[RMDB]
RNA sequence: GGGAACGACUCGAGUAGAGUCGAAAAGAUAUGGAGUAAACGGCUAGUUGUUCGGAAACGAAUACAACUUGGACCCGUCUACUCCUAAGUCAAAACUAAAUCUAGUGGUUCGCCACUAGAUUUAGAACAUAUGGAUCGACUUCGGUCGAUCCAUAUGAAAAGAAACAACAACAACAAC
Reactivity to DMS in 0.01 (KOAc 150mM, MgCl2 10mM, bicine 150mM(pH8.5), 24C), signal-to-noise 2, nucleotides 027 to 126: g010a060u000a300u000g010g020a060g040u010a020a020a040c010g010g000c020u000a020g000u000u000g020u000u010c000g000g000a070a050a210c010g020a020a050u000a050c010a010a010c010u000u010g050g020a140c290c010c000g010u000c050u000a010c000u010c000c000u010a010a050g000u000c050a100a060a070a170c020u000a000a010a010u000c000u000a010g020u010g000g000u000u010c300g000c000c000a010c000u000a000g010a000u000u010u000a000g000a120a170
Reactivity to 2A3 in 0.01 (KOAc 150mM, MgCl2 10mM, bicine 150mM(pH8.5), 24C), signal-to-noise 1, nucleotides 027 to 126: g050a020u100a040u110g000g010a010g010u000a000a010a040c000g000g000c010u030a010g010u000u020g020u020u000c000g000g050a050a100a070c010g020a050a000u190a090c030a010a000c030u070u180g130g090a150c060c010c000g000u000c000u000a000c000u000c000c000u010a150a000g030u030c020a000a000a060a150c020u000a000a020a030u010c000u000a010g010u030g100g000u050u070c300g040c130c000a000c010u020a000g000a000u000u010u000a010g000a000a000